[RMDB]
RNA sequence: GGGAACGACUCGAGUAGAGUCGAAAAUUGCGGCCCUAAGCACUGGAGAUGACCCUUGAGGGAGGUUUCACUCUGCAGAGAUCUCUCCCCCGUCGCGUGGCGGGUGGGAACACGUUAGUGCGGGGGGAACACACACUCACUUCGGUGAGUGUGUGUUAAAAGAAACAACAACAACAAC
Reactivity to DMS in 0.01 (KOAc 150mM, MgCl2 10mM, bicine 150mM(pH8.5), 24C), signal-to-noise 2, nucleotides 027 to 126: u000u020g010c060g000g030c020c000c010u040a140a070g020c010a010c020u000g000g000a060g010a090u010g040a250c050c010c000u020u010g000a140g000g010g000a050g010g020u010u000u010c000a080c050u010c060u030g030c110a080g020a070g000a040u000c020u000c000u010c000c020c000c020c000g010u020c030g010c170g020u010g000g010c070g020g000g000u020g010g000g000a120a110c070a050c120g020u010u030a030g010u010g010c010g000g010g010g010g000g010
Reactivity to 2A3 in 0.01 (KOAc 150mM, MgCl2 10mM, bicine 150mM(pH8.5), 24C), signal-to-noise 4, nucleotides 027 to 126: u160u170g030c080g010g040c000c000c000u030a150a020g020c010a000c030u050g020g080a120g060a140u060g080a080c000c020c040u050u160g050a260g010g020g010a020g010g030u030u010u010c040a060c050u070c100u150g030c070a020g010a020g010a070u000c020u000c010u030c040c000c000c000c000g020u020c010g010c100g120u150g010g000c070g020g010g030u090g040g000g000a040a050c030a010c030g050u060u130a020g000u020g040c000g000g000g000g000g040g010